[RMDB]
Record summary
Structure probing data (2A3) for a 177-nucleotide construct. Values cover nucleotides 27 to 126. 2A3 adducts were read by reverse transcription with SuperScript II with manganese. The reactions ran in a buffer of 150 mM KOAc, 10 mM MgCl2 and 150 mM bicine (pH 8.5), at 24 C. The 2A3 profile rests on 524 reads.
RNA sequence: GGGAACGACUCGAGUAGAGUCGAAAAGUCGCCUUCAACAUCGCCAGCAUCAUCGCGCUGUUGCUGCUGCCCAACAACGCGACCUGGCUCGCCUUCGGCUGGCUGAUCGGCGGGGUGGCGCAACUGCUGCGAGCAGCUGCUUCGGCAGCUGCUCGCAAAAAGAAACAACAACAACAAC
Reactivity to 2A3 in 0.01 (KOAc 150mM, MgCl2 10mM, bicine 150mM(pH8.5), 24C), signal-to-noise 1, nucleotides 027 to 126: g000u040c000g020c080c000u230u300c030a050a050c010a160u010c020g030c000c000a020g030c000a070u100c000a050u050c050g010c000g000c000u000g000u000u000g010c030u190g000c000u070g030c030c000c010a120a120c040a090a090c010g040c000g010a040c010c050u030g040g000c000u060c000g040c090c060u070u180c000g020g000c040u030g050g010c120u170g020a080u040c100g110g020c000g070g000g000g000u010g010g010c000g000c030a040a000c030u010g050c040